[RMDB]
RNA sequence: GGGAACGACUCGAGUAGAGUCGAAAAGAUAUGGAGAUGAGGUCCGAAGAACGUACUGUUUGUCAACUCCUAUUCGGAAACGAAUAGGAGUUGAUGAUAGUACGGGAGGACACUCAUCUCCUAAGUCGAUCGUUAUGUAGUUCGCUACAUAACGAUCAAAAGAAACAACAACAACAAC
Reactivity to 2A3 in 0.01 (KOAc 150mM, MgCl2 10mM, bicine 150mM(pH8.5), 24C), signal-to-noise 2, nucleotides 027 to 126: g050a040u150a110u190g010g000a010g010a000u000g000a010g030g010u000c000c010g160a280a050g020a060a020c000g000u010a000c000u040g300u180u180u290g080u010c000a000a000c000u000c000c000u000a000u010u000c020g010g040a030a110a100c000g000a000a000u000a000g000g030a000g000u000u000g000a000u000g000a000u000a000g000u000a000c000g010g010g000a030g000g000a000c010a020c000u000c000a000u000c000u010c000c000u000a010a010g010u020c070
Reactivity to DMS in 0.01 (KOAc 150mM, MgCl2 10mM, bicine 150mM(pH8.5), 24C), signal-to-noise 3, nucleotides 027 to 126: g000a100u000a300u000g010g000a010g000a000u000g010a020g000g000u000c000c000g030a110a220g010a160a220c010g010u000a010c000u010g040u000u010u020g040u000c000a000a010c000u000c000c000u000a000u000u000c000g000g000a140a100a210c000g010a020a000u000a010g010g000a010g000u000u000g000a000u000g000a010u010a000g000u000a000c000g000g000g010a090g010g010a020c000a070c000u000c000a000u000c000u000c000c000u010a000a090g000u000c110